[RMDB]
RNA sequence: GGGAACGACUCGAGUAGAGUCGAAAAGAUAUGGAUGGAGCUCUGGGAGGUGGGUUACAUCGGAAACGAUGUAGACACUCAGAGCGUUGAAAUCCUAAGUCAGCACCGCGCGGUUCGCCGCGCGGAACCUAUAACCUUAGUUCGCUAAGGUUAUAGGAAAAGAAACAACAACAACAAC
Reactivity to DMS in 0.01 (KOAc 150mM, MgCl2 10mM, bicine 150mM(pH8.5), 24C), signal-to-noise 5, nucleotides 027 to 126: g000a050u000a300u000g000g010a010u000g000g010a140g010c000u000c000u000g010g020g020a130g010g020u000g010g010g010u000u000a000c000a000u010c000g010g000a120a080a180c000g020a010u000g010u000a020g000a050c010a040c000u000c000a020g000a010g000c010g020u000u020g000a110a110a050u000c000c000u000a070a160g000u000c020a140g010c190a190c000c000g010c000g010c000g000g010u000u010c240g010c010c020g020c010g000c000g000g000a010a020
Reactivity to 2A3 in 0.01 (KOAc 150mM, MgCl2 10mM, bicine 150mM(pH8.5), 24C), signal-to-noise 4, nucleotides 027 to 126: g010a020u090a040u190g010g000a000u010g010g040a030g000c000u000c010u020g150g210g080a290g140g210u130g060g150g040u060u000a000c000a000u000c010g010g000a050a070a020c010g010a000u010g000u010a020g020a010c020a020c030u170c020a010g010a000g000c000g010u020u020g010a030a010a000u000c010c000u020a200a030g090u050c040a010g100c070a050c060c010g000c020g010c020g000g130u040u100c300g040c140c020g000c000g000c010g000g000a000a010